[RMDB]
This 177-nucleotide RNA was probed chemically with DMS.
It was measured as part of the RMDB library OK2TRN.
For DMS the reverse transcriptase was MarathonRT.
For DMS, 1,249 sequencing reads were counted.
RNA sequence: GGGAACGACUCGAGUAGAGUCGAAAAGGUGCCCACCCCAGGGGUGAAGACAGGAUGGGUGGGGUUCUCAGCUCCACUGGACACCAAACAGAAGCUGUAAGUGCAAGGCUAGUGCCCAUGUCGAGGGCGCAGUGCCAACAUUCGUGUUGGCACUGCGAAAAGAAACAACAACAACAAC
Reactivity to DMS in 0.01 (KOAc 150mM, MgCl2 10mM, bicine 150mM(pH8.5), 24C), signal-to-noise 2, nucleotides 027 to 126: g000g010u000g000c020c000c020a190c050c010c010c040a200g040g000g000g030u020g020a110a080g030a090c140a050g020g020a080u010g000g000g080u000g010g000g010g000u010u000c070u000c200a150g010c070u000c000c030a060c040u000g020g010a170c040a040c090c070a030a100a080c160a040g000a060a060g020c040u000g010u010a070a070g030u010g000c050a090a070g020g000c050u010a090g020u010g010c000c000c010a110u000g000u000c160g000a110g000g010g000